[RMDB]
RNA sequence: GGGAACGACUCGAGUAGAGUCGAAAAAGGGCACAUUGAUGCAAGAAGUGGCCUCCCAAGUUCUUGGGCAGCUCUACCUCUGAAGCUCCAUAGGGUACAGCCCCUGUGGCUGCUUUCACGGGCUGGCAUUGAUUGCCUGCAGCUUUUCCAGGUGCAAUCAUACCUGACGGUUCGCCGUCAGGUAUGAAAAAGAAACAACAACAACAAC
Reactivity to 2A3 in 0.01 (KOAc 150mM, MgCl2 10mM, bicine 150mM(pH8.5), 24C), signal-to-noise 1, nucleotides 027 to 156: a000g020g010g040c010a040c050a070u000u060g090a060u080g060c070a070a030g020a080a050g130u120g110g000c000c030u060c010c000c000a050a030g160u230u130c100u080u000g000g000g000c010a020g010c010u060c050u130a150c020c020u040c020u030g000a000a000g000c000u000c000c010a000u000a000g080g000g000u170a300c180a110g080c000c000c000c000u020g000u000g010g000c200u060g000c000u030u120u020c010a010c050g000g000g000c010u030g070g000c020a000u010u070g130a070u000u140g000c000c020u030g060c050a130g080c030u000u110u060u000c020c000a050g040g040u020g120c000a040a050
An RNA of 207 nucleotides, treated with 2A3 and read out base by base.
The reactions ran in a buffer of 150 mM KOAc, 10 mM MgCl2 and 150 mM bicine (pH 8.5), at 24 C.
The data come from the RNA Mapping Database (RMDB), library OK3TST.